[RMDB]
RNA sequence: GGGAACGACUCGAGUAGAGUCGAAAACUGGGUCGCGCCAUCCGAUGUUUCAUGGCUGGUGAGCCAGCAUGACGUGAUGGUCAUGCCAUCGCGCUAUGAAGGUUUCGGCUCGACGCUGAUUGAGGCACUAAUCACUGAGGUUCGCCUCAGUGAUUAGAAAAGAAACAACAACAACAAC
Reactivity to 2A3 in 0.01 (KOAc 150mM, MgCl2 10mM, bicine 150mM(pH8.5), 24C), signal-to-noise 6, nucleotides 027 to 126: c010u030g040g020g000u030c010g010c010g010c050c010a010u010c010c010g080a100u110g080u060u090u070c050a040u050g070g030c020u020g010g040u060g040a040g090c040c000a010g000c010a000u020g010a010c010g030u040g030a040u060g030g020u030c030a030u210g040c000c000a020u000c000g010c010g000c030u040a030u060g030a070a030g040g020u030u090u180c080g010g000c010u000c020g030a040c050g030c040u070g050a270u070u160g050a110g040g020c030a000
Reactivity to DMS in 0.01 (KOAc 150mM, MgCl2 10mM, bicine 150mM(pH8.5), 24C), signal-to-noise 7, nucleotides 027 to 126: c030u010g000g010g020u000c020g020c120g010c010c010a060u000c020c020g010a100u000g020u010u000u010c030a070u010g000g010c030u000g020g010u000g000a170g010c050c070a110g010c000a020u010g010a030c010g020u000g010a040u000g010g000u000c180a090u000g010c010c010a020u000c010g010c030g010c020u000a010u000g000a080a060g000g000u000u000u000c060g010g010c040u000c010g010a110c130g000c030u010g000a110u000u000g010a090g000g020c080a230

An RNA of 177 nucleotides, treated with 2A3 and DMS and read out base by base. High DMS reactivity at an A or C suggests that its Watson-Crick edge is free. The reactions ran in a buffer of 150 mM KOAc, 10 mM MgCl2 and 150 mM bicine (pH 8.5), at 24 C. For 2A3, 14,180 sequencing reads were counted.